[RMDB]
RNA sequence: GGGAACGACUCGAGUAGAGUCGAAAAGAAUUUCUUUAGGAAAUCCUCUUUGCUGGGCCCCGAACCCCAGCUUGCUUAGCUUGUAGAAUUUCUUUAGGAAAUUCUCUUUGCUGGGGCCCGGCCUACCCAACCGGGCAAUUUUCGAAUUGCCCGGUUGAAAAGAAACAACAACAACAAC
Reactivity to 2A3 in 0.01 (KOAc 150mM, MgCl2 10mM, bicine 150mM(pH8.5), 24C), signal-to-noise 1, nucleotides 027 to 126: g010a000a000u050u050u050c050u270u300u200a180g150g040a000a010a000u040c000c020u010c030u030u070u030g010c000u010g000g000g000c000c000c010c000g080a080a060c030c030c020c010a040g040c090u030u040g000c030u190u150a050g000c030u010u090g060u190a020g010a020a020u030u020u030c060u060u300u130a120g140g000a000a000a000u000u000c000u010c000u070u140u120g020c040u040g000g000g000g000c000c010c040g000g020c000c000u010a030c000c000

The record gives the reactivity of an RNA of 177 nucleotides to 2A3.